[RMDB]
Source: RMDB library OK3TST, as collected in RNAgym. The record gives the reactivity of an RNA of 207 nucleotides to DMS and 2A3. For DMS the reverse transcriptase was MarathonRT. Reactivities are given for positions 27 through 156.
RNA sequence: GGGAACGACUCGAGUAGAGUCGAAAAGUACUAACUGGAGGAACGGGAGUAGGGAAGACUUCGCAGGUGCCCAAGGUAGUCAUGUGGUUCAACUACCUCUUCGGCGGGUUCGAUAACCUGGAGGAAGUACCUCGCCCGCCUGUGCGAGUCGAGGAGCUGAUAGCAUUUCUUUCGAGAAAUGCUAUCAAAAAGAAACAACAACAACAAC
Reactivity to DMS in 0.01 (KOAc 150mM, MgCl2 10mM, bicine 150mM(pH8.5), 24C), signal-to-noise 1, nucleotides 027 to 156: g020u010a180c020u010a050a090c040u000g030g030a080g030g020a060a060c120g020g020g000a060g000u000a060g030g010g010a120a090g000a070c060u020u000c040g000c000a050g040g020u000g050c040c020c080a040a010g000g000u000a000g010u000c070a190u000g000u040g010g000u050u000c060a050a070c000u000a000c010c020u010c040u000u000c040g050g020c030g000g030g010u000u010c040g010a180u000a020a010c040c000u070g020g000a120g000g000a140a050g020u000a110c020c010u000c010g000c040c040c000g000c000c060u000g030u020g010c040g010a060g040u000c010g020a120g010g040a090g040c120
Reactivity to 2A3 in 0.01 (KOAc 150mM, MgCl2 10mM, bicine 150mM(pH8.5), 24C), signal-to-noise 2, nucleotides 027 to 156: g030u030a030c040u050a150a100c060u090g020g010a030g020g000a080a040c030g020g000g000a020g030u130a050g020g040g010a020a020g010a010c040u070u020c090g010c040a020g050g000u030g000c010c010c010a000a010g050g020u000a020g020u050c120a170u180g060u110g060g130u140u190c010a010a000c000u000a010c010c000u000c020u080u080c010g030g000c040g000g000g010u040u060c020g050a110u070a240a110c000c010u080g030g010a050g010g000a050a070g030u030a060c000c000u010c030g020c010c020c010g010c000c020u010g000u010g000c050g010a020g020u060c010g010a020g000g020a040g060c060